[RMDB]
RNA sequence: GGGAACGACUCGAGUAGAGUCGAAAAACAACAGAUAGCUGGAACCAGCGUAGAAUUCUACGCAUAUCCAUAGCGAAUGGUACCUGUAAAGAAAAUAAUGAAAGAUGUACAAGUACCAACAGCUUUCAAUGCCAUGGUGAUGUCAAUCACAUAUGCAUGCUACGCUAUAGUUCGCUAUAGCGUAGCAAAAAGAAACAACAACAACAAC
Reactivity to DMS in 0.01 (KOAc 150mM, MgCl2 10mM, bicine 150mM(pH8.5), 24C), signal-to-noise 1, nucleotides 027 to 156: a000c060a050a130c050a140g010a070u000a070g000c060u000g010g000a140a150c090c020a160g010c010g000u000a010g020a110a140u000u000c050u000a010c010g010c010a070u040a060u000c050c040a170u020a000g000c000g000a170a300u000g050g020u000a000c000c000u000g060u000a030a130a060g000a160a120a090a190u000a110a050u010g010a100a080a170g050a300u000g040u000a050c010a060a000g000u020a070c000c000a040a100c060a050g000c050u020u000u020c090a020a110u040g010c020c060a140u010g020g060u000g020a020u000g020u000c160a070a140u010c050a050c010a100u000a060u000g000c000a190
Reactivity to 2A3 in 0.01 (KOAc 150mM, MgCl2 10mM, bicine 150mM(pH8.5), 24C), signal-to-noise 3, nucleotides 027 to 156: a000c070a060a010c060a030g120a160u110a050g070c030u050g040g000a080a020c060c020a040g000c000g000u000a000g060a260a280u300u090c000u000a000c000g000c020a000u010a060u120c060c000a010u090a060g000c020g080a090a000u020g000g000u000a000c000c000u010g020u050a050a050a020g170a030a070a030a060u260a020a070u150g130a080a070a090g110a030u110g000u030a010c000a010a060g020u000a000c000c000a010a060c020a010g000c010u060u230u170c140a080a070u050g000c000c050a030u030g020g000u010g000a020u040g070u180c100a070a030u070c000a020c020a060u050a020u120g000c020a010